[RMDB]
The data come from the RNA Mapping Database (RMDB), library OK2TST.
Structure probing data (2A3 and DMS) for a 177-nucleotide construct.
DMS (dimethyl sulfate) methylates the pairing face of unpaired adenines and cytosines.
The DMS profile rests on 601 reads.
2A3 adducts were read by reverse transcription with SuperScript II with manganese.

RNA sequence: GGGAACGACUCGAGUAGAGUCGAAAAGCCAUAAGCAUUCAUACUUUCCCCACUUUGAGGCUACAGAGUAUUUGUGGCAAGUGGACUAGCUGUCCAGUACUGUAAAGACUUCAAUGGGCUUAGGCAACUCUGUCGAGGGUUUCGACCCUCGACAGAGAAAAGAAACAACAACAACAAC
Reactivity to 2A3 in 0.01 (KOAc 150mM, MgCl2 10mM, bicine 150mM(pH8.5), 24C), signal-to-noise 1, nucleotides 027 to 126: g030c030c000a150u050a020a000g030c030a110u130u190c050a030u180a300c080u020u060u090c010c010c010c000a030c010u040u040u000g000a000g000g000c010u080a040c030a030g060a030g010u050a120u050u300u200g100u260g060g000c040a110a060g050u080g110g000a100c110u090a040g000c010u000g000u040c000c000a020g010u010a010c000u010g010u140a050a060a220g040a140c000u010u020c030a010a080u020g000g000g000c000u010u010a010g020g000c020a000a130
Reactivity to DMS in 0.01 (KOAc 150mM, MgCl2 10mM, bicine 150mM(pH8.5), 24C), signal-to-noise 1, nucleotides 027 to 126: g040c000c010a070u010a070a010g000c010a130u020u000c190a110u010a080c160u000u000u000c040c000c000c300a250c060u000u000u000g010a080g010g020c050u000a020c300a100g000a060g010u000a040u000u000u000g030u020g050g010c050a040a090g030u020g020g030a040c160u010a080g000c080u000g000u000c030c000a020g000u000a030c030u000g010u000a080a150a120g010a230c000u000u000c040a010a050u000g000g000g000c020u000u000a020g010g010c010a130a160